[RMDB]
RNA sequence: GGGAACGACUCGAGUAGAGUCGAAAAAACUCAGCUAGGGAGAGUAUAACAGUCAUGUUGACGAGACCUAGACGAAACACAGAGGAAAAUUAUUAAUCACUGGAUAGUAUUAGUAAUGACUCUGUGUAAAACUCUUCUACGUUCGCGUAGAAGAGAACGUAUUAACAAACUUCGGUUUGUUAAUACGAAAAGAAACAACAACAACAAC
Reactivity to DMS in 0.01 (KOAc 150mM, MgCl2 10mM, bicine 150mM(pH8.5), 24C), signal-to-noise 3, nucleotides 027 to 156: a090a060c030u010c010a080g010c020u000a050g000g010g000a180g000a180g020u010a080u000a060a050c040a090g000u020c210a100u010g010u000u000g010a130c050g000a270g000a070c000c010u000a050g010a270c070g000a110a080a080c000a020c010a010g000a050g010g000a070a070a060a070u000u000a010u000u000a010a010u000c080a070c030u000g030g010a180u010a080g000u000a050u000u000a030g020u000a000a010u000g000a170c000u010c010u010g010u000g020u000a010a030a040a080c000u000c000u020u000c000u000a000c010g010u000u000c280g020c020g040u000a020g000a010a000g000a020g000a040a040
Reactivity to 2A3 in 0.01 (KOAc 150mM, MgCl2 10mM, bicine 150mM(pH8.5), 24C), signal-to-noise 6, nucleotides 027 to 156: a000a000c020u020c010a010g010c000u000a000g010g020g010a070g010a040g060u150a120u070a300a040c040a030g050u070c070a140u180g060u200u170g080a010c010g000a010g040a040c000c000u000a010g010a040c030g010a010a050a000c000a000c000a000g000a010g010g030a080a160a120a000u000u010a000u000u000a010a010u020c050a010c040u070g070g090a140u300a300g010u020a000u000u010a000g000u000a000a010u010g020a010c000u000c000u000g000u000g000u010a000a000a000a000c000u010c010u000u010c000u000a010c000g020u020u040c240g010c010g080u000a000g000a010a000g000a000g000a010a000